[RMDB]
Chemical mapping of a 170-nucleotide RNA with DMS and 2A3. Values cover nucleotides 27 to 129. The reactions ran in a buffer of 150 mM KOAc, 10 mM MgCl2 and 150 mM bicine (pH 8.5), at 24 C. The data come from the RNA Mapping Database (RMDB), library 15KLIB. High 2A3 reactivity points to a flexible backbone, as in loops and unpaired stretches.
RNA sequence: GGGAACGACUCGAGUAGAGUCGAAAACAUUGGUUGUUUGCGACCCUUGUCUCAACCUAUGUGAUAAUCUUACAAGCCACUAAAUUUACUUUGUGGAACUACUUGUUUGAGACUAUUCCCACACAGUGACCCAAUUCGUUCGCGAAUUGGAAAAGAAACAACAACAACAAC
Reactivity to DMS in 0.01 (KOAc 150mM, MgCl2 10mM, bicine 150mM(pH8.5), 24C), signal-to-noise 9, nucleotides 027 to 129: c020a030u010u010g030g000u010u010g030u060u050u070g040c100g010a130c040c190c190u060u120g000u010c050u030c000a020a010c000c020u000a030u010g010u010g000a130u030a110a080u030c010u010u010a000c020a000a000g020c000c000a030c040u050a020a080a100u090u100u060a130c270u060u010u000g020u000g000g000a040a020c050u050a260c020u060u000g010u030u050u030g030a030g000a080c110u030a070u000u000c030c030c010a100c190a080c130a060g070u020g030a120c130
Reactivity to 2A3 in 0.01 (KOAc 150mM, MgCl2 10mM, bicine 150mM(pH8.5), 24C), signal-to-noise 9, nucleotides 027 to 129: c010a010u030u040g010g010u010u010g040u120u160u250g090c070g050a120c060c060c040u080u300g050u020c020u000c020a000a000c000c010u020a020u000g020u000g050a090u050a200a030u000c000u000u010a000c000a000a000g010c000c000a010c030u220a030a040a130u200u280u160a130c160u070u050u050g000u010g000g010a020a030c050u120a030c000u230u010g020u020u030u050g020a010g010a010c020u040a070u020u020c000c040c000a010c010a000c010a030g180u160g090a050c020